[RMDB]
RNA sequence: GGGAACGACUCGAGUAGAGUCGAAAAGACUUGAUUUGCCACACUAUUUCGAGCCUUGCAGCGCAAGCUGGAUAUCCUCUUUGAGUGAAUCGCUCGAUUAACACUAAACCAAAGACAGGGCAAAUAACGAGAUAGAGACGUUCGCGUCUCUAUCUCGAAAAGAAACAACAACAACAAC
Reactivity to 2A3 in 0.01 (KOAc 150mM, MgCl2 10mM, bicine 150mM(pH8.5), 24C), signal-to-noise 5, nucleotides 027 to 126: g090a030c100u140u180g040a020u080u000u020g000c000c010a170c000a020c090u070a070u060u060u010c000g010a000g000c000c050u150u300g020c050a000g010c020g010c070a100a010g000c010u000g000g000a030u050a130u030c000c000u040c010u130u110u300g020a000g000u260g010a000a010u000c000g000c010u010c000g000a000u000u030a030a000c070a010c080u160a110a160a040c050c080a140a090a010g060a040c110a090g020g010g010c000a000a000a030u080a030a020
Reactivity to DMS in 0.01 (KOAc 150mM, MgCl2 10mM, bicine 150mM(pH8.5), 24C), signal-to-noise 2, nucleotides 027 to 126: g020a200c150u010u010g030a000u000u000u000g000c000c000a270c200a090c210u000a060u000u000u010c020g000a000g000c000c020u010u010g010c000a010g000c030g000c300a050a050g030c010u000g000g020a000u000a030u000c060c000u000c000u020u010u090g000a000g010u000g000a050a020u000c020g030c000u000c000g000a010u000u000a030a120c160a110c050u000a070a140a210c050c070a100a060a200g000a120c150a070g050g040g080c020a030a000a010u010a030a270

The record gives the reactivity of an RNA of 177 nucleotides to 2A3 and DMS. High 2A3 reactivity points to a flexible backbone, as in loops and unpaired stretches. Conditions: 150 mM KOAc, 10 mM MgCl2 and 150 mM bicine (pH 8.5), 24 C.